[RMDB]
RNA sequence: GGGAACGACUCGAGUAGAGUCGAAAAGCAUCUUGUCAGUCAGCACAUGGAAAAGGCCAUUCCCUGCUGCAGGGGGCGGUCCAGCAAGGCAGCAGUCACAGUGACAGUAAUCAUAGCCACUGCUUAUUGAGUGCUUAUUACUGGAGCCAGGACAGUAGCAUUUAUGGGGAUUCGUCCCCAUAAAUGCAAAAGAAACAACAACAACAAC
Reactivity to DMS in 0.01 (KOAc 150mM, MgCl2 10mM, bicine 150mM(pH8.5), 24C), signal-to-noise 2, nucleotides 027 to 156: g010c020a050u000c020u010u030g010u010c060a070g010u010c030a110g050c040a080c070a090u010g020g000a030a030a100a060g010g030c020c020a120u020u000c010c030c000u000g000c100u000g040c080a130g010g030g010g000g050c040g000g010u000c040c010a100g080c070a060a140g030g020c010a050g100c000a040g030u000c200a080c070a050g040u000g010a110c010a080g040u000a030a090u000c080a170u000a120g040c030c010a050c000u010g030c090u000u010a100u000u010g000a160g030u020g010c010u000u000a100u000u000a000c000u000g000g000a170g010c060c000a120g020g020a050c020a110g020u000a090
Reactivity to 2A3 in 0.01 (KOAc 150mM, MgCl2 10mM, bicine 150mM(pH8.5), 24C), signal-to-noise 5, nucleotides 027 to 156: g000c000a050u050c050u120u110g030u090c020a030g020u050c040a020g030c030a050c020a090u070g050g030a040a040a060a050g060g000c000c000a020u050u050c000c000c010u040g040c040u070g020c050a050g020g000g000g000g030c040g000g010u020c020c020a020g020c020a030a010g050g000c020a010g000c010a020g010u030c030a030c020a090g000u030g080a020c010a010g030u050a020a040u110c100a090u100a050g090c100c010a030c030u070g100c030u230u080a100u190u260g050a020g030u040g010c000u030u030a020u020u020a010c000u010g020g020a010g040c030c010a030g010g000a020c010a020g020u060a010

The data come from the RNA Mapping Database (RMDB), library OK3TST. Structure probing data (DMS and 2A3) for a 207-nucleotide construct. For DMS the reverse transcriptase was MarathonRT. Reactivities are given for positions 27 through 156. The reactions ran in a buffer of 150 mM KOAc, 10 mM MgCl2 and 150 mM bicine (pH 8.5), at 24 C.